[RMDB]
RNA sequence: GGGAACGACUCGAGUAGAGUCGAAAAGAGCGAUCAAUUAAGGCGAAGUGAAGGGGAUCACUAGGCUGGGUCUACGAAAGUAGUAAAUGCCAACCCAACCCCAAGUGAACGCCACACUAGAUCGCAAGGGAUAGUAUUGGUUCGCCAAUACUAUCCCAAAAGAAACAACAACAACAAC
Reactivity to 2A3 in 0.01 (KOAc 150mM, MgCl2 10mM, bicine 150mM(pH8.5), 24C), signal-to-noise 3, nucleotides 027 to 126: g120a020g000c000g010a000u010c000a050a110u100u190a140a080g030g000c030g030a050a010g070u060g110a180a120g000g040g000g010a060u080c030a030c150u070a060g010g000c010u010g000g030g050u030c010u000a010c000g060a040a020a040g020u020a000g010u020a040a080a100u170g070c020c010a010a010c010c000c000a040a100c000c010c000c010a020a000g020u020g060a200a050c020g040c010c000a030c000a000c010u040a040g000a020u000c010g000c010a000a050
Reactivity to DMS in 0.01 (KOAc 150mM, MgCl2 10mM, bicine 150mM(pH8.5), 24C), signal-to-noise 2, nucleotides 027 to 126: g040a270g000c000g000a000u000c000a120a160u010u000a100a150g000g020c110g050a120a180g010u010g030a090a180g060g000g000g010a200u010c070a090c110u000a040g030g030c030u000g010g000g000u010c000u000a000c000g000a130a060a200g020u000a000g000u000a040a040a070u000g030c120c100a070a020c040c050c040a050a110c030c000c030c060a050a110g010u010g000a030a080c020g030c020c010a120c090a040c130u000a100g000a020u000c000g020c040a130a070
About this RNA: This 177-nucleotide RNA was probed chemically with 2A3 and DMS. 2A3 adducts were read by reverse transcription with SuperScript II with manganese. The RNA was probed in 150 mM KOAc, 10 mM MgCl2 and 150 mM bicine (pH 8.5) at 24 C. Values are in units of 0.01, from 0 to 300, in steps of 10. The 2A3 profile rests on 3,736 reads.